[RMDB]
RNA sequence: GGGAACGACUCGAGUAGAGUCGAAAAACACCUUCAAUAGGUUUCACUCAAACAGUCAAACACUGUGAUGCAGCAGCAUUCGUUCGUGCAAUUGAUGCUUCUUGGCGUGUUCCUGGUCGUCAGGGUCCAAGGGACGGGAGUUCGCUCCCGUCCCUUGAAAAGAAACAACAACAACAAC
Reactivity to DMS in 0.01 (KOAc 150mM, MgCl2 10mM, bicine 150mM(pH8.5), 24C), signal-to-noise 1, nucleotides 027 to 126: a070c150a040c050c000u010u000c210a140a060u000a090g000g010u010u000u000c080a100c070u070c090a060a190a070c040a060g000u010c030a080a050a060c110a090c020u000g020u000g000a100u030g010c010a060g020c050a050g000c010a040u000u000c040g020u000u000c070g060u010g020c060a070a110u000u000g000a060u000g000c020u020u000c020u000u000g000g020c000g030u000g000u000u000c000c040u000g020g020u000c030g040u000c090a050g030g000g000u000c150
Reactivity to 2A3 in 0.01 (KOAc 150mM, MgCl2 10mM, bicine 150mM(pH8.5), 24C), signal-to-noise 1, nucleotides 027 to 126: a000c030a070c020c010u080u100c070a210a160u100a140g050g000u020u040u080c070a090c000u050c000a090a000a220c030a050g080u040c030a040a110a190c030a050c040u090g070u010g090a030u060g000c040a120g050c070a010g080c000a000u050u050c060g110u100u020c030g040u050g120c060a070a050u070u120g030a050u060g030c020u030u080c010u050u040g010g000c020g040u070g030u050u040c000c010u070g000g090u030c050g060u070c050a050g000g010g070u000c010